Conditions: 150 mM KOAc, 10 mM MgCl2 and 150 mM bicine (pH 8.5), 24 C. The record gives the reactivity of an RNA of 207 nucleotides to DMS and 2A3.
RNA sequence: GGGAACGACUCGAGUAGAGUCGAAAACUCGCUCAAACAUACAGAGAUGUUGUGCGAGAUGAAUCUCUCUGCAUUAGAAUGGUCGAAGAAUCAGCGGCCAUUCGAGACCGAAUUAGAAGCCGCAUUAACAGCUUUGGAACACGCCUUGCUGACGUGAAAUACCUAUCGCAUUCGUGCGAUAGGUAUUAAAAGAAACAACAACAACAAC
Reactivity to DMS in 0.01 (KOAc 150mM, MgCl2 10mM, bicine 150mM(pH8.5), 24C), signal-to-noise 3, nucleotides 027 to 156: c030u000c010g030c030u000c050a080a020a070c030a080u000a300c050a210g010a110g010a030u000g000u000u000g010u000g010c010g010a060g000a070u000g030a120a120u000c010u000c020u000c010u000g040c040a090u000u010a110g010a050a040u010g000g030u000c010g020a150a140g030a200a160u000c140a140g010c060g000g000c030c000a060u000u000c000g010a140g020a050c060c050g000a080a120u000u010a150g020a080a090g000c040c020g000c040a120u000u010a040a080c050a030g000c020u000u000u010g030g000a120a190c010a020c040g030c010c020u000u000g030c140u010g010a060c060g010u000g000a090
Reactivity to 2A3 in 0.01 (KOAc 150mM, MgCl2 10mM, bicine 150mM(pH8.5), 24C), signal-to-noise 4, nucleotides 027 to 156: c000u000c000g000c010u020c020a170a120a050c010a030u130a080c090a080g120a010g030a090u020g000u010u000g000u010g000c000g000a020g010a020u090g050a080a120u010c030u030c000u010c050u090g020c030a090u080u070a040g010a010a010u030g010g000u010c010g020a080a030g050a140a180u080c040a080g070c000g000g000c000c000a000u000u000c000g010a000g020a000c020c050g070a080a070u100u050a100g050a080a000g040c000c030g060c100a080u120u090a060a070c020a060g010c010u140u060u110g060g020a050a080c020a010c020g000c000c010u040u050g000c020u050g010a040c030g050u030g030a040
The data come from the RNA Mapping Database (RMDB), library OK3TST.